[RMDB]
RNA sequence: GGGAACGACUCGAGUAGAGUCGAAAAGGAAAUAAACGGCACCUAUAACGUGGUGCCGAACCAGCGUGACCUACCAACACGCAACGAGCAGUCUGGUAUGACUGCAAAGGUAUGGUAAACAAAAAAAUAACAAAACAUCAUUCGUGAUGUUUUGUUAAAAAGAAACAACAACAACAAC
Reactivity to 2A3 in 0.01 (KOAc 150mM, MgCl2 10mM, bicine 150mM(pH8.5), 24C), signal-to-noise 5, nucleotides 027 to 126: g030g010a080a010a060u170a070a150a030c020g010g010c000a000c000c010u080a070u050a300a100c180g070u090g010g000u000g000c000c000g000a000a000c000c010a000g010c000g000u000g040a100c010c030u010a030c020c000a040a050c020a010c020g010c030a010a050c050g030a030g000c000a010g000u000c010u130g130g090u290a100u270g010a000c000u000g000c000a020a030a000g020g000u120a080u170g010g040u080a100a080a050c120a080a080a000a010a000a010a070
Reactivity to DMS in 0.01 (KOAc 150mM, MgCl2 10mM, bicine 150mM(pH8.5), 24C), signal-to-noise 4, nucleotides 027 to 126: g010g010a090a060a080u010a040a090a190c010g010g000c010a010c000c000u000a100u000a110a120c290g000u020g000g040u000g010c010c000g010a020a030c040c020a140g000c000g010u010g000a070c020c010u000a040c010c010a250a040c020a000c010g000c020a110a090c120g020a260g010c010a020g010u000c000u000g010g020u010a070u000g010a020c000u010g010c000a010a020a070g000g000u000a070u020g010g010u020a030a110a070c170a030a010a020a070a090a060a100